Chemical mapping of a 177-nucleotide RNA with 2A3 and DMS. The 2A3 profile rests on 1,824 reads. For DMS, 2,738 sequencing reads were counted. For DMS the reverse transcriptase was MarathonRT. Conditions: 150 mM KOAc, 10 mM MgCl2 and 150 mM bicine (pH 8.5), 24 C.
RNA sequence: GGGAACGACUCGAGUAGAGUCGAAAACGGUAAUCAGCGACACGACCUGGCUGGGGUUGUCGGCCGUCAGCGAAGCACCGCGCGCAUCAGCGAGACGGUGCUGUACGGGCUGCUGGUGCUGCACACCCUAUCAUCACCGCUUCGGCGGUGAUGAUAGAAAAGAAACAACAACAACAAC
Reactivity to 2A3 in 0.01 (KOAc 150mM, MgCl2 10mM, bicine 150mM(pH8.5), 24C), signal-to-noise 2, nucleotides 027 to 126: c040g000g010u100a120a080u060c000a020g030c020g090a040c000a010c090g120a090c010c010u100g220g030c150u130g000g010g000g020u050u040g070u060c000g020g000c010c010g100u020c010a030g060c050g080a050a010g000c000a020c020c020g010c010g000c000g020c040a240u220c170a190g000c010g010a020g030a110c010g010g010u000g030c010u000g010u010a000c010g030g050g010c010u040g000c000u020g030g020u030g020c020u050g000c000a020c010a010c050c020
Reactivity to DMS in 0.01 (KOAc 150mM, MgCl2 10mM, bicine 150mM(pH8.5), 24C), signal-to-noise 3, nucleotides 027 to 126: c030g000g010u000a090a080u000c030a050g000c030g000a110c090a060c040g010a080c050c050u000g010g020c080u020g020g000g000g000u000u000g020u010c070g000g040c010c000g000u000c020a060g020c050g020a160a030g000c000a010c000c010g020c060g000c000g000c010a180u000c280a150g000c020g000a040g000a150c000g020g000u000g000c000u000g010u010a090c100g000g020g020c020u000g000c030u000g000g000u000g010c010u010g020c070a120c150a100c020c010